[RMDB]
RNA sequence: GGGAACGACUCGAGUAGAGUCGAAAAAUUUUAGCUGGUAGUGUCUACACUAAUAGCUGCCUUGUAUCGUCUGAUGGACAACCUGGCGGUGAUGCUAUUAGUUUGAGUUUUAAUAACCUUUUAGGGUAAAGUGUGAGGUUCGCCUCACACAAAAGAAACAACAACAACAAC
Reactivity to DMS in 0.01 (KOAc 150mM, MgCl2 10mM, bicine 150mM(pH8.5), 24C), signal-to-noise 6, nucleotides 027 to 129: a180u050u050u020u010a000g000c010u000g000g000u000a030g030u030g020u030c030u030a010c090a100c110u040a010a020u030a170g020c020u030g050c030c010u000u080g020u050a080u030c140g010u020c030u000g050a240u090g040g040a000c000a120a090c050c030u020g000g020c040g060g030u040g030a000u020g020c010u000a020u010u020a020g000u000u060u020g010a060g030u010u000u020u030a080a110u030a090a030c020c030u070u010u080u070a060g030g010g050u060a050a080a090
Reactivity to 2A3 in 0.01 (KOAc 150mM, MgCl2 10mM, bicine 150mM(pH8.5), 24C), signal-to-noise 9, nucleotides 027 to 129: a000u050u040u010u030a000g000c000u000g000g010u010a010g000u010g000u000c040u110a080c090a070c170u170a090a140u070a150g030c000u000g000c010c000u010u020g050u090a280u160c090g060u000c010u110g240a210u300g110g000a000c000a030a030c010c000u000g000g000c000g020g030u120g010a010u070g000c000u000a010u010u010a010g000u010u010u070g000a000g000u000u000u010u020a190a190u100a040a030c020c000u070u120u110u300a150g050g040g010u060a090a050a020